[RMDB]
Structure probing data (2A3 and DMS) for a 207-nucleotide construct.
DMS adducts were read by reverse transcription with MarathonRT.
For DMS, 5,023 sequencing reads were counted.
RNA sequence: GGGAACGACUCGAGUAGAGUCGAAAAGUGUCGCGAACCUCGGGGUUGUCGUGCAGGACCUGGAGUCCGUGCUCGGGGUCGGCGAGCCAGUCGGCGGCGCGGCGCGGGGUCCAGUGCGCGAGCCUGCGGAUCUUCCUCCCCACGAACUCCAGCGCCAAACUCAUACUUUUUUCGAAAAGUAUGAGUUAAAAGAAACAACAACAACAAC
Reactivity to 2A3 in 0.01 (KOAc 150mM, MgCl2 10mM, bicine 150mM(pH8.5), 24C), signal-to-noise 2, nucleotides 027 to 156: g050u060g060u080c040g010c020g040a050a060c000c020u050c080g030g000g000g020u070u070g080u100c030g040u050g030c040a020g010g060a070c020c010u020g000g060a090g300u010c000c010g000u000g010c050u060c070g130g000g000g030u010c000g000g030c010g010a070g150c170c060a050g070u020c000g000g030c000g060g070c040g010c050g050g010c000g000c010g000g000g000g050u000c000c010a030g010u060g040c020g000c010g010a030g010c010c000u060g030c030g030g010a050u040c070u130u020c020c020u040c020c000c010c000a020c040g010a020a020c030u030c050c020a020g020c010g040c110c020a030
Reactivity to DMS in 0.01 (KOAc 150mM, MgCl2 10mM, bicine 150mM(pH8.5), 24C), signal-to-noise 2, nucleotides 027 to 156: g060u000g010u010c000g040c040g030a060a150c010c020u020c030g020g030g000g040u010u000g010u000c020g030u030g050c030a100g030g020a090c090c020u010g040g010a130g020u000c010c020g050u010g030c000u010c020g000g000g020g010u000c030g040g050c020g010a130g010c110c140a170g030u010c060g040g010c010g010g000c040g020c120g000g010c010g000c030g010g140g020g010u010c010c020a080g010u000g010c060g020c070g010a120g040c020c010u010g010c020g000g010a070u000c060u010u000c030c020u000c020c010c000c010a090c040g020a050a070c020u010c020c020a120g030c000g000c020c060a090